Notes
An RNA of 177 nucleotides, treated with DMS and 2A3 and read out base by base. The DMS profile rests on 1,687 reads. Reactivities are given for positions 27 through 126. The RNA was probed in 150 mM KOAc, 10 mM MgCl2 and 150 mM bicine (pH 8.5) at 24 C. For 2A3, 3,612 sequencing reads were counted.
RNA sequence: GGGAACGACUCGAGUAGAGUCGAAAAGAUAUGGAGGUAGAGCAACAGCCACACCGCUCGGAAACGAGCGUUGUGGACAUGCUUGUUCUCCUAAGUCAAAACGUCUCUCACUUCGGUGAGAGACGAAGCAUAUACCGCACUUCGGUGCGGUAUAUGCAAAAGAAACAACAACAACAAC
Reactivity to DMS in 0.01 (KOAc 150mM, MgCl2 10mM, bicine 150mM(pH8.5), 24C), signal-to-noise 2, nucleotides 027 to 126: g000a060u010a300u000g000g010a000g000g010u000a140g000a010g010c010a010a100c300a170g020c000c000a000c000a000c030c000g040c010u000c000g000g000a100a060a200c000g000a010g050c000g000u000u000g010u010g010g040a040c150a090u000g030c040u000u000g000u000u030c000u000c000c030u000a020a120g000u000c030a070a040a120a120c020g000u000c000u000c000u000c020a010c000u000u020c230g010g010u000g000a020g000a000g000a000c000g000a010a100
Reactivity to 2A3 in 0.01 (KOAc 150mM, MgCl2 10mM, bicine 150mM(pH8.5), 24C), signal-to-noise 2, nucleotides 027 to 126: g020a030u060a040u140g010g010a010g010g070u220a060g050a000g050c010a000a050c040a140g280c000c000a010c000a000c000c030g000c000u010c010g010g000a040a040a010c010g010a000g000c000g010u020u000g000u010g000g070a020c010a020u020g000c000u010u010g050u200u040c020u010c010c010u010a060a000g060u010c000a000a020a020a170c010g010u010c000u000c010u000c000a030c020u020u080c300g180g000u010g000a000g010a000g000a000c000g000a000a000